An RNA of 177 nucleotides, treated with 2A3 and DMS and read out base by base.
2A3 is a SHAPE reagent: it acylates the 2'-hydroxyl of flexible nucleotides of all four kinds.
The RNA was probed in 150 mM KOAc, 10 mM MgCl2 and 150 mM bicine (pH 8.5) at 24 C.
RNA sequence: GGGAACGACUCGAGUAGAGUCGAAAAGCAUCCCGCUUCGGCGGGAUGCAAAAGCGAUCGUGUCAUUGCCUCGAACGCAACUCAUUUAAUGAUGGGCAGUGAAAAGUCUGGGCUUCGGCCCAGACAAGAGGAUACAUUAGUUCGCUAAUGUAUCCUCAAAAGAAACAACAACAACAAC
Reactivity to 2A3 in 0.01 (KOAc 150mM, MgCl2 10mM, bicine 150mM(pH8.5), 24C), signal-to-noise 7, nucleotides 027 to 126: g010c000a000u020c030c010c010g000c000u050u050c150g150g000c030g020g020g020a000u010g010c000a000a010a010a010g020c000g010a040u040c020g030u030g110u130c010a030u020u040g010c000c010u020c020g020a050a010c010g000c010a010a110c020u040c060a100u100u190u270a250a130u200g130a070u110g020g010g000c000a020g010u010g030a060a040a020a030g000u000c000u000g000g000g010c000u040u090c270g110g000c000c000c000a000g000a000c000a000a010
Reactivity to DMS in 0.01 (KOAc 150mM, MgCl2 10mM, bicine 150mM(pH8.5), 24C), signal-to-noise 4, nucleotides 027 to 126: g000c000a000u000c000c000c010g020c010u010u010c150g020g040c010g030g020g000a000u000g010c010a000a020a110a120g010c030g010a060u010c020g030u010g010u000c030a020u000u000g010c010c000u000c030g010a050a110c020g020c010a070a110c040u010c030a110u010u010u010a120a090u010g010a060u010g010g010g000c020a010g020u010g000a110a110a100a130g010u000c000u000g010g000g020c010u000u010c140g030g010c010c000c000a000g000a000c010a010a050